Chemical mapping of a 177-nucleotide RNA with DMS. Conditions: 150 mM KOAc, 10 mM MgCl2 and 150 mM bicine (pH 8.5), 24 C. The data come from the RNA Mapping Database (RMDB), library TTRINS. The DMS profile rests on 2,245 reads.
RNA sequence: GGGAACGACUCGAGUAGAGUCGAAAAGAUAUGGAUAGUAAGAUUUAAAACCGUCGCAGGGAGAGGUUGUCGGAAACGACAAUACCUCGAAGAACUGCACGGUUUUAAAUCUUACUAUCCUAAGUCAUCUCUAAUUUAGGUUCGCCUAAAUUAGAGAAAAAGAAACAACAACAACAAC
Reactivity to DMS in 0.01 (KOAc 150mM, MgCl2 10mM, bicine 150mM(pH8.5), 24C), signal-to-noise 2, nucleotides 027 to 126: g000a070u010a300u010g000g010a000u000a010g000u000a000a010g000a030u010u000u000a000a000a010a000c000c000g000u010c280g030c000a030g020g000g010a100g010a010g020g010u000u000g020u010c000g030g000a080a160a300c000g020a020c000a020a110u000a060c030c000u010c020g000a110a180g010a110a150c010u000g000c010a010c000g000g020u000u000u000u000a010a000a000u000c000u000u000a000c010u000a020u000c000c000u000a010a060g000u010c020a140